RNA sequence: GGGAACGACUCGAGUAGAGUCGAAAAGAUAUGGAGCAUUUAGCUUUUGACGUCGACUAAUCGGAAACGAUUAGAAUCGACGAUAAGCUGGAAUGCUCCUAAGUCAAAUCGAGGGUUCGCCCUCGAACAAUUCAGAGUGGUUCGCCACUCUGAAUUGAAAAGAAACAACAACAACAAC
Reactivity to 2A3 in 0.01 (KOAc 150mM, MgCl2 10mM, bicine 150mM(pH8.5), 24C), signal-to-noise 4, nucleotides 027 to 126: g010a010u050a050u210g000g010a000g010c010a010u000u000u020a010g000c010u070u080u140u250g300a200c070g000u010c000g010a000c010u000a000a010u020c000g020g060a120a050a040c010g010a010u010u010a000g030a090a250u020c000g010a000c000g000a020u020a020a000g010c000u050g000g150a020a010u000g000c010u000c000c000u010a010a000g000u010c000a000a020a160u050c000g000a010g050g030g010u090u130c300g160c030c000c000u000c010g000a010a010
Reactivity to DMS in 0.01 (KOAc 150mM, MgCl2 10mM, bicine 150mM(pH8.5), 24C), signal-to-noise 3, nucleotides 027 to 126: g010a050u000a300u000g010g010a010g000c000a010u000u000u000a040g010c010u000u010u010u010g030a210c110g020u000c010g020a060c000u000a000a020u000c000g000g000a100a100a180c000g010a010u000u010a020g000a110a140u000c000g010a010c000g010a090u010a020a020g020c000u010g010g050a010a010u000g010c000u000c000c000u000a010a090g010u000c050a080a140a180u000c010g010a020g000g010g020u000u010c300g030c000c000c000u000c000g010a030a170